[RMDB]
RNA sequence: GGGAACGACUCGAGUAGAGUCGAAAAUUAAAGCUUUUGCUAUUGAGGAACCAGUUAUCGCACAAAUGGUCUUUGUUGACGCACAGGGAGUUCGUAAGUUUACUCAAUCUGAUUGGGCCAGAAAGGAUACUCUGUCGUGUUUCGACACGACAGAGUAAAAAGAAACAACAACAACAAC
Reactivity to DMS in 0.01 (KOAc 150mM, MgCl2 10mM, bicine 150mM(pH8.5), 24C), signal-to-noise 1, nucleotides 027 to 126: u000u020a000a140a070g010c030u000u000u000u000g010c050u000a060u000u000g010a070g000g000a080a110c040c080a090g040u000u020a070u000c010g050c100a090c080a050a030a060u000g000g010u010c010u000u000u000g010u010u000g040a100c110g010c050a060c040a040g000g010g000a110g000u000u000c060g000u040a060a090g020u000u010u000a050c060u000c040a110a080u010c070u010g000a130u010u000g010g010g030c010c070a040g000a060a050a080g020g030a160